Chemical mapping of a 177-nucleotide RNA with 2A3 and DMS. The RNA was probed in 150 mM KOAc, 10 mM MgCl2 and 150 mM bicine (pH 8.5) at 24 C.
RNA sequence: GGGAACGACUCGAGUAGAGUCGAAAAGAUAUGGAUAUUUGCGACGAUAAGUCGCCAUCGGAAACGAUGGGCGACUUUUGACGUCGACAAAUAUCCUAAGUCAAAAUCAGGACGUUCGCGUCCUGAAGGAAUCACUAAGGUUCGCCUUAGUGAUUCCAAAAGAAACAACAACAACAAC
Reactivity to 2A3 in 0.01 (KOAc 150mM, MgCl2 10mM, bicine 150mM(pH8.5), 24C), signal-to-noise 2, nucleotides 027 to 126: g010a010u060a020u170g010g020a010u020a020u020u020u000g020c000g000a010c020g050a060u070a220a020g000u000c010g000c000c000a010u000c010g060g010a080a080a070c010g000a020u050g070g070g040c000g000a000c000u070u030u010u080g170a160c070g000u000c010g040a100c020a010a000a000u000a000u000c000c000u000a060a020g020u030c050a050a020a040a300u050c000a010g010g000a010c010g040u070u070c300g030c010g170u020c000c020u000g000a010a050
Reactivity to DMS in 0.01 (KOAc 150mM, MgCl2 10mM, bicine 150mM(pH8.5), 24C), signal-to-noise 3, nucleotides 027 to 126: g000a040u000a300u010g000g000a010u000a000u000u000u000g010c000g030a030c000g030a160u000a020a030g000u000c000g000c010c000a000u000c000g020g000a120a050a180c000g030a000u000g020g020g020c000g000a010c000u010u010u020u020g010a280c120g000u010c000g010a080c000a000a000a000u000a000u000c000c010u000a010a100g010u000c020a120a110a130a170u000c000a020g000g000a010c000g030u000u020c300g020c000g040u000c000c000u010g000a030a080
For 2A3 the reverse transcriptase was SuperScript II with manganese. As a SHAPE reagent, 2A3 marks flexible, mostly unpaired nucleotides at the ribose 2'-OH. For DMS the reverse transcriptase was MarathonRT. It was measured as part of the RMDB library TTRDES. DMS (dimethyl sulfate) methylates the pairing face of unpaired adenines and cytosines.